The record gives the reactivity of an RNA of 177 nucleotides to 2A3. The 2A3 profile rests on 484 reads. Values cover nucleotides 27 to 126.

[RMDB]
RNA sequence: GGGAACGACUCGAGUAGAGUCGAAAACUACAACAGUGCGAUCGAGGCCCACGCACUACUGUGAAACCCCCUUACUCUGCGUCGCUUGAUCAGAAGGUCCUUGUGAGCUCUCAACGUAGACCAACAGGGGGUAUGCAUGGUUCGCCAUGCAUACCCCAAAAGAAACAACAACAACAAC
Reactivity to 2A3 in 0.01 (KOAc 150mM, MgCl2 10mM, bicine 150mM(pH8.5), 24C), signal-to-noise 1, nucleotides 027 to 126: c050u080a020c090a060a000c000a000g000u000g020c010g050a080u100c110g090a180g040g000c000c000c000a000c000g060c020a000c000u050a070c000u030g010u050g110a130a140a120c000c000c000c000c000u040u070a000c000u030c080u160g000c020g000u020c000g000c030u020u100g010a000u040c000a000g080a100a000g120g000u000c020c020u030u060g020u000g020a040g000c010u000c030u020c020a000a000c000g080u090a060g050a000c000c000a000a050c000a030g060